[RMDB]
RNA sequence: GGGAACGACUCGAGUAGAGUCGAAAAUAACUGAAGAUCUCAUCCUCUUCACACCUGUUGGGAUGGAGCCUCCCAUGGAUAGGAACUCUUCCUGGUUGAUGCUCAGCAGAUGACUGAUCUGGCUCUAGCGAUGACCUCUCUUCGGAGAGGUCGUCGCAAAAGAAACAACAACAACAAC
Reactivity to 2A3 in 0.01 (KOAc 150mM, MgCl2 10mM, bicine 150mM(pH8.5), 24C), signal-to-noise 4, nucleotides 027 to 126: u160a030a040c150u060g030a030a020g020a050u020c020u020c120a070u060c000c000u040c000u030u070c020a030c010a030c040c000u090g060u120u070g040g000g020a020u050g040g000a000g020c000c020u020c000c010c010a090u190g000g020a070u100a100g070g040a130a070c020u050c020u140u000c000c000u040g000g000u060u100g030a080u140g050c010u020c040a030g000c010a030g030a250u130g090a150c080u090g040a090u070c050u080g050g010c000u000c010u040a020
Reactivity to DMS in 0.01 (KOAc 150mM, MgCl2 10mM, bicine 150mM(pH8.5), 24C), signal-to-noise 3, nucleotides 027 to 126: u050a070a110c180u000g000a040a030g000a010u010c020u000c050a080u000c080c120u010c010u000u020c010a130c180a200c050c030u000g000u010u000g030g000g000a090u010g000g010a040g000c030c010u000c030c010c010a050u020g020g020a030u030a050g010g010a070a150c120u030c060u000u010c000c000u000g020g010u020u020g010a090u010g000c080u000c020a070g010c030a070g010a070u010g010a060c110u010g010a070u020c050u020g020g000c010u000c000u000a140
About this RNA
The record gives the reactivity of an RNA of 177 nucleotides to 2A3 and DMS. It was measured as part of the RMDB library OK1LIB. Values cover nucleotides 27 to 126. For DMS, 5,528 sequencing reads were counted. For 2A3, 1,977 sequencing reads were counted.